[RMDB]
An RNA of 207 nucleotides, treated with DMS and 2A3 and read out base by base. For DMS, 2,542 sequencing reads were counted. 2A3 is a SHAPE reagent: it acylates the 2'-hydroxyl of flexible nucleotides of all four kinds. For 2A3, 2,143 sequencing reads were counted. Values cover nucleotides 27 to 156. For 2A3 the reverse transcriptase was SuperScript II with manganese.
RNA sequence: GGGAACGACUCGAGUAGAGUCGAAAAGAUCUGCGCCGAUCCGAAACGCUAGCAAACAGCCCGCAUUAUGUCGUCUCCUAACUUCGACGUGGUGAAAUACUGAGCUUAUGCGAGUAAGCCUGUUAGCAAUAGAUCAGAACGUUCGCGUUCUGAUCAACACUUGGGGUAGAUUCGUCUACCCCAAGUGAAAAGAAACAACAACAACAAC
Reactivity to DMS in 0.01 (KOAc 150mM, MgCl2 10mM, bicine 150mM(pH8.5), 24C), signal-to-noise 1, nucleotides 027 to 156: g030a090u000c030u000g010c070g020c010c000g020a090u010c040c020g020a060a060a100c160g050c050u000a040g020c000a050a070a100c110a260g010c030c030c000g010c030a180u000u000a060u000g020u000c020g010u020c030u000c040c020u000a080a100c070u010u000c030g020a040c050g040u000g000g000u010g000a130a120a130u000a080c070u000g000a200g000c030u000u000a010u030g010c150g000a140g000u000a010a070g000c010c040u000g000u000u010a060g050c010a100a160u020a090g000a030u000c010a000g000a010a040c000g010u010u020c290g020c050g020u010u000c000u010g010a000u000c000a050a100
Reactivity to 2A3 in 0.01 (KOAc 150mM, MgCl2 10mM, bicine 150mM(pH8.5), 24C), signal-to-noise 3, nucleotides 027 to 156: g020a070u010c010u060g030c020g020c030c030g030a060u050c040c030g030a030a080a010c060g000c020u040a030g020c060a060a030a060c020a060g050c000c040c020g000c030a040u070u080a050u130g040u020c000g040u010c040u060c060c060u100a100a130c030u090u100c020g040a040c030g040u090g000g000u030g050a080a080a020u150a090c040u030g000a020g010c030u070u040a010u080g040c020g020a060g030u020a010a000g000c010c020u040g020u070u090a010g000c050a060a080u060a210g010a010u000c000a000g000a010a000c010g020u050u050c200g010c000g110u000u000c010u000g010a000u000c000a000a000